This 177-nucleotide RNA was probed chemically with 2A3 and DMS. High DMS reactivity at an A or C suggests that its Watson-Crick edge is free. The 2A3 profile rests on 5,486 reads. 2A3 adducts were read by reverse transcription with SuperScript II with manganese. DMS adducts were read by reverse transcription with MarathonRT.

RNA sequence: GGGAACGACUCGAGUAGAGUCGAAAAGAUAUGGACGUGUACCAAGAGGCCACUUAUAUCGGAAACGAUAUAAUGCUACCCACCUUGACACGUCCUAAGUCAAAAGCCUUCUGUUCGCAGAAGGCAACACAUGCUCCAUGUUCGCAUGGAGCAUGUGAAAAGAAACAACAACAACAAC
Reactivity to 2A3 in 0.01 (KOAc 150mM, MgCl2 10mM, bicine 150mM(pH8.5), 24C), signal-to-noise 2, nucleotides 027 to 126: g030a030u060a050u160g000g000a000c000g000u010g010u040a200c130c020a030a030g050a060g030g010c060c020a110c070u000u010a000u000a000u000c010g010g020a080a060a010c020g000a000u010a010u000a010a040u300g000c020u090a090c050c020c030a170c010c030u000u040g020a020c000a000c020g000u000c000c000u000a070a020g020u010c010a030a000a080a130g010c010c000u000u000c010u010g090u010u120c300g000c090a000g000a000a000g000g050c000a000a000
Reactivity to DMS in 0.01 (KOAc 150mM, MgCl2 10mM, bicine 150mM(pH8.5), 24C), signal-to-noise 2, nucleotides 027 to 126: g000a000u000a300u000g010g000a000c000g030u000g020u000a130c300c030a040a030g000a130g000g020c060c050a090c080u000u000a030u010a000u000c000g000g000a090a120a080c000g000a000u000a000u000a040a020u000g000c000u000a070c100c070c130a250c120c020u010u000g010a050c000a010c000g000u000c000c000u000a010a080g020u000c030a110a100a070a110g000c000c010u000u000c010u000g000u000u000c200g040c000a040g020a000a000g010g010c000a010a030